[RMDB]
RNA sequence: GGGAACGACUCGAGUAGAGUCGAAAAGUGCCGGCAAUACAGUGUGUAUGGAGGUCUCAAUGGCUCGGAAGUGCCAGCAAACCGGCGUAGAUAUUAGCAGACGUAUGGGCGGAAGACUUUUAUUGAAAAAAGUACAUAAGCUUCGGCUUAUGUACAAGUCUCGUGUGUAGUUCGCUACACACGAGACAAAAGAAACAACAACAACAAC
Reactivity to 2A3 in 0.01 (KOAc 150mM, MgCl2 10mM, bicine 150mM(pH8.5), 24C), signal-to-noise 1, nucleotides 027 to 156: g120u040g060c000c000g000g050c050a100a020u060a080c020a050g000u040g020u010g000u240a040u060g110g000a010g050g090u040c030u000c060a110a170u110g000g000c060u060c040g050g070a120a070g020u010g060c000c010a000g040c040a020a090a000c030c000g000g000c000g020u010a040g020a040u130a060u140u170a010g020c020a030g040a090c020g020u050a060u070g030g040g050c020g020g010a010a000g000a060c010u000u060u140u090a150u100u220g000a140a000a000a000a000a000g000u000a010c000a000u000a000a000g000c000u010u040c070g110g000c000u010u010a000u000g000u000a010c000a000a000

An RNA of 207 nucleotides, treated with 2A3 and read out base by base. Values are in units of 0.01, from 0 to 300, in steps of 10. The reactions ran in a buffer of 150 mM KOAc, 10 mM MgCl2 and 150 mM bicine (pH 8.5), at 24 C. The 2A3 profile rests on 490 reads.